Source: RMDB library RNAMAK, as collected in RNAgym. Structure probing data (2A3) for a 207-nucleotide construct. The reactions ran in a buffer of 150 mM KOAc, 10 mM MgCl2 and 150 mM bicine (pH 8.5), at 24 C.
[RMDB]
RNA sequence: GGGAACGACUCGAGUAGAGUCGAAAAGGGGUCAGCUGUGAUAUAAGGAUUGCUUUAGACAUGUGCUGAAGCCUCCACGGCACAACAGCUAAAGCUUGAUUUAUCUGUGCUGACGGAGGCACCCAAAGAUCGUCCCAACUUCGGUUGGGACGAUCAACUUUAGUGCUGGCUUCGGCCAGCACUAAAGAAAAGAAACAACAACAACAAC
Reactivity to 2A3 in 0.01 (KOAc 150mM, MgCl2 10mM, bicine 150mM(pH8.5), 24C), signal-to-noise 1, nucleotides 027 to 156: g050g020g000g010u000c000a000g010c000u070g030u150g150a020u020a020u070a180a210g210g040a190u300u150g020c000u020u030u000a030g010a160c040a100u060g000u000g040c000u020g030a080a050g020c000c010u000c000c000a020c000g000g000c000a000c000a040a110c040a080g220c030u050a030a000a000g000c000u000u100g180a080u070u070u100a040u000c080u010g240u150g080c010u010g010a030c040g000g000a000g010g000c010a000c010c000c010a060a130a030g020a000u000c000g040u010c040c030c000a000a000c000u070u090c250g060g010u000u000g000g000g000a000c000g000a000u000c000a000a000